Notes: This 207-nucleotide RNA was probed chemically with DMS and 2A3. Source: RMDB library PDB130, as collected in RNAgym. For DMS, 1,863 sequencing reads were counted. For DMS the reverse transcriptase was MarathonRT. For 2A3 the reverse transcriptase was SuperScript II with manganese. Reactivities are given for positions 27 through 156. The 2A3 profile rests on 2,019 reads.
[RMDB]
RNA sequence: GGGAACGACUCGAGUAGAGUCGAAAACAACUGCCUAAAACUCAAAGGACUUGGCGGUGCUUCACAUCCACCUAGAGGAGCCUGUUCUAUAAUCGAUAAACCCCGAUAGACCUUACCAACCCUUGCCAAUUCAGCCUAUAUACCGCCAUCUUCAGCAGAACGAAAGAUUGUUCGCAAUCUUUCGUUCAAAAGAAACAACAACAACAAC
Reactivity to DMS in 0.01 (KOAc 150mM, MgCl2 10mM, bicine 150mM(pH8.5), 24C), signal-to-noise 1, nucleotides 027 to 156: c000a050a180c060u000g000c030c020u020a050a060a080a060c030u010c030a120a160a140g000g000a110c040u010u000g050g020c000g010g000u000g030c040u000u000c070a050c080a110u010c050c010a020c040c070u000a070g040a170g010g010a110g050c000c040u000g020u000u000c020u000a070u010a070a080u000c080g010a130u000a040a060a080c040c040c020c030g020a140u010a100g010a060c010c000u000u000a100c030c060a090a110c060c010c040u010u010g070c000c010a080a110u000u000c020a070g000c010c030u000a110u000a110u000a060c020c000g000c000c010a060u000c030u000u000c000a060g020c070a190
Reactivity to 2A3 in 0.01 (KOAc 150mM, MgCl2 10mM, bicine 150mM(pH8.5), 24C), signal-to-noise 3, nucleotides 027 to 156: c030a020a020c040u040g010c020c000u130a130a090a070a060c040u070c120a110a140a040g050g010a040c090u070u080g040g010c000g010g000u030g020c020u070u070c070a040c000a110u030c020c010a030c030c020u090a030g010a060g090g020a020g010c000c030u030g050u070u000c020u040a110u120a180a130u090c020g020a020u080a070a140a100c000c020c000c000g030a000u030a050g030a030c000c020u030u050a030c030c020a030a070c010c000c010u010u040g030c030c020a020a010u030u040c010a050g020c000c000u050a070u010a010u050a130c030c000g020c010c020a020u010c040u080u050c000a030g040c080a010